[RMDB]
RNA sequence: GGGAACGACUCGAGUAGAGUCGAAAAAGACUUGUAUUCGUACAAGUCUACAGAAAUUUCGCUAGCACACGAUCACACGUAGCGUUCUCAAUAACGAUCGAACAACGUGUCAAUUCGUUGACACGAAACUUUCAACACUAUUCGUAGUGUUGAAAGUAAAAGAAACAACAACAACAAC
Reactivity to DMS in 0.01 (KOAc 150mM, MgCl2 10mM, bicine 150mM(pH8.5), 24C), signal-to-noise 7, nucleotides 027 to 126: a010g000a010c000u010u010g010u000a020u000u010c210g030u000a010c000a010a010g010u000c000u000a080c200a110g020a080a100a140u000u000u000c010g020c010u000a050g010c100a080c130a090c020g000a020u010c030a100c160a100c150g020u010a020g020c010g000u000u000c010u000c010a120a080u010a060a050c180g000a030u000c030g000a160a090c190a070a140c010g000u010g000u000c000a010a030u000u010c180g010u000u000g000a010c010a010c010g010a020a050
Reactivity to 2A3 in 0.01 (KOAc 150mM, MgCl2 10mM, bicine 150mM(pH8.5), 24C), signal-to-noise 9, nucleotides 027 to 126: a000g000a000c000u000u000g000u010a020u030u090c220g020u040a000c000a010a000g000u000c000u000a010c010a040g210a040a160a060u040u040u020c020g000c030u030a040g050c070a040c020a020c130g030a030u020c010a030c010a020c180g080u050a010g000c000g010u010u000c010u000c000a020a060u190a080a040c100g020a030u040c030g030a080a020c050a040a040c020g000u000g000u000c000a010a030u040u060c160g070u060u020g010a000c000a000c010g010a050a010

Background:
An RNA of 177 nucleotides, treated with DMS and 2A3 and read out base by base. Conditions: 150 mM KOAc, 10 mM MgCl2 and 150 mM bicine (pH 8.5), 24 C. 2A3 adducts were read by reverse transcription with SuperScript II with manganese. In probing experiments dimethyl sulfate is read out at A N1 and C N3, which are open when not base-paired.